Notes
Structure probing data (2A3 and DMS) for a 177-nucleotide construct. Conditions: 150 mM KOAc, 10 mM MgCl2 and 150 mM bicine (pH 8.5), 24 C. For 2A3, 4,515 sequencing reads were counted.
RNA sequence: GGGAACGACUCGAGUAGAGUCGAAAAGAUAUGGAGGUUGAGCACGCGAUAAGAAACGUCGGAAACGACGUUUCUUUUGACGCGUUCCCUCACUGCCUCCUAAGUCAAACCGGUCUUCGGACCGGAACAUGGUGUUUUACUUCGGUAAAACACCAUGAAAAGAAACAACAACAACAAC
Reactivity to 2A3 in 0.01 (KOAc 150mM, MgCl2 10mM, bicine 150mM(pH8.5), 24C), signal-to-noise 2, nucleotides 027 to 126: g020a010u070a070u210g000g000a000g060g000u090u080g040a010g020c260a000c000g000c010g040a070u010a140a010g000a040a000a000c000g020u010c010g000g010a090a100a010c000g000a010c000g000u000u010u010c000u010u000u000u030g020a000c040g000c000g000u040u030c010c000c000u000c000a040c090u130g020c010c010u000c000c010u050a150a010g030u010c060a000a000a230c010c000g000g010u000c000u050u120c300g170g010a010c000c020g000g020a000a000
Reactivity to DMS in 0.01 (KOAc 150mM, MgCl2 10mM, bicine 150mM(pH8.5), 24C), signal-to-noise 4, nucleotides 027 to 126: g020a040u000a300u000g020g000a000g010g010u000u000g000a010g070c260a020c010g040c000g020a140u000a010a020g000a010a000a000c000g010u000c010g010g000a120a100a280c000g000a010c000g010u000u000u000c000u000u000u010u000g010a240c100g010c010g010u000u010c130c160c000u000c010a060c300u010g020c000c000u000c000c000u000a050a100g000u000c060a080a120a190c010c000g000g000u000c000u000u020c270g010g000a030c000c000g000g010a040a040
About this RNA:
Reactivities are given for positions 27 through 126.